The record gives the reactivity of an RNA of 177 nucleotides to DMS and 2A3. 2A3 adducts were read by reverse transcription with SuperScript II with manganese. For DMS the reverse transcriptase was MarathonRT. Conditions: 150 mM KOAc, 10 mM MgCl2 and 150 mM bicine (pH 8.5), 24 C.
[RMDB]
RNA sequence: GGGAACGACUCGAGUAGAGUCGAAAAUGUUCCAUAACAGACGUCCACUUUUUGAUGAAAAGGUGGACACUACAUCACCAAUACAAGUUUAAUGGCUACAUACGGCACUCAGUUUACACUUACAUUAAAUGGUCCUACAAUUCGUUGUAGGACCAUUAAAAGAAACAACAACAACAAC
Reactivity to DMS in 0.01 (KOAc 150mM, MgCl2 10mM, bicine 150mM(pH8.5), 24C), signal-to-noise 3, nucleotides 027 to 126: u040g000u010u000c020c020a090u030a100a080c190a080g000a100c170g030u000c000c000a020c010u000u000u000u010u000g020a200u020g000a070a000a000a000g000g010u000g000g000a030c020a020c070u030a110c120a060u010c040a070c040c050a070a050u010a070c110a100a110g000u010u010u010a050a070u000g000g000c040u000a090c040a070u000a070c090g010g000c040a020c050u000c080a060g000u010u010u010a090c090a090c090u010u000a080c130a050u020u010a080
Reactivity to 2A3 in 0.01 (KOAc 150mM, MgCl2 10mM, bicine 150mM(pH8.5), 24C), signal-to-noise 1, nucleotides 027 to 126: u070g000u000u040c020c000a040u090a100a100c090a010g210a050c150g000u010c000c000a040c000u060u000u000u050u160g300a300u090g100a030a000a000a030g030g000u000g020g070a000c020a010c020u000a000c000a040u080c020a040c060c000a010a160u110a140c000a090a000g010u040u040u080a130a070u090g020g010c000u030a030c000a100u100a070c000g000g000c000a000c030u020c050a040g040u070u050u060a080c110a000c030u070u160a000c020a080u080u070a020